[RMDB]
The data come from the RNA Mapping Database (RMDB), library OK3TST. The record gives the reactivity of an RNA of 207 nucleotides to 2A3 and DMS. Reactivities are given for positions 27 through 156. The 2A3 profile rests on 1,998 reads.
RNA sequence: GGGAACGACUCGAGUAGAGUCGAAAAACUAUGGGUGCACAAAAGCAUACAGCAUGGUAUAAGGGACAUUGGAGGCUCACAAGCUGGAAUCGUGGGAAGGGGAUUGAAUGAUGAAAAAACACCUAUUGGGUACAACGUACAAGACUUGAGUGACAGAAAUUAUUUUACUGUUCGCAGUAAAAUAAUUAAAAGAAACAACAACAACAAC
Reactivity to 2A3 in 0.01 (KOAc 150mM, MgCl2 10mM, bicine 150mM(pH8.5), 24C), signal-to-noise 1, nucleotides 027 to 156: a000c060u060a070u080g010g000g010u020g000c050a030c030a080a110a040a050g020c000a040u120a120c050a080g040c000a040u050g020g020u050a070u040a160a070g010g000g010a010c020a020u070u100g070g000a030g050g000c010u030c040a060c020a050a030g030c030u050g000g070a040a030u070c050g040u110g020g000g040a050a030g060g020g000g030a010u080u050g060a060a040u080g050a020u100g020a000a110a010a000a000a000c060a020c000c010u050a120u120u100g020g000g000u060a040c060a060a020c070g030u060a030c020a070a030g010a050c030u030u050g030a020g020u070g050a030c010a040g120a060
Reactivity to DMS in 0.01 (KOAc 150mM, MgCl2 10mM, bicine 150mM(pH8.5), 24C), signal-to-noise 2, nucleotides 027 to 156: a110c030u010a080u000g010g030g070u000g010c040a120c100a090a060a190a190g000c050a120u010a050c020a110g130c030a100u000g010g040u000a060u000a040a070g010g040g010a070c050a120u000u000g000g010a150g000g040c040u000c020a120c050a050a170g010c020u010g010g010a070a070u000c030g010u010g000g010g020a070a070g030g000g030g000a080u010u010g000a060a070u000g020a110u000g000a000a010a040a080a050a040c040a030c010c010u000a140u010u000g050g020g000u020a070c060a010a050c020g000u000a060c090a050a150g010a060c040u000u010g010a090g070u000g000a090c100a110g000a050